[RMDB]
Conditions: 150 mM KOAc, 10 mM MgCl2 and 150 mM bicine (pH 8.5), 24 C. The record gives the reactivity of an RNA of 207 nucleotides to 2A3. Reactivities are given for positions 27 through 156. It was measured as part of the RMDB library OK3TST.

RNA sequence: GGGAACGACUCGAGUAGAGUCGAAAACGUUCGAGCAGUUCGAAGAACGCGUCCUGCACGUCCUCUUUGUCGUUCAGCGCCUGAAUCACGACGUCGUCCGCUGUCUCGGCCAGAAGCCCGUUCGGUGUUCGCAGCAUGGCUUUGAACUGGUAGAUCGCCAUGACAAUCGUUUCGACGAUUGUCAUGGAAAAGAAACAACAACAACAAC
Reactivity to 2A3 in 0.01 (KOAc 150mM, MgCl2 10mM, bicine 150mM(pH8.5), 24C), signal-to-noise 1, nucleotides 027 to 156: c000g020u050u030c020g040a060g160c020a000g020u050u030c040g000a030a030g040a100a020c020g000c000g070u040c020c000u000g000c050a010c010g050u050c010c020u070c050u000u040u190g020u020c010g020u000u070c010a010g020c020g010c070c040u120g070a090a120u100c040a040c140g100a040c060g030u080c030g050u050c000c000g010c070u020g040u180c040u000c060g010g000c020c000a010g080a070a030g030c040c030c000g000u010u060c010g000g000u030g030u020u080c020g040c070a050g000c020a080u110g140g000c000u000u000u050g020a000a000c000u000g000g040u020a010g010a050u040c050g000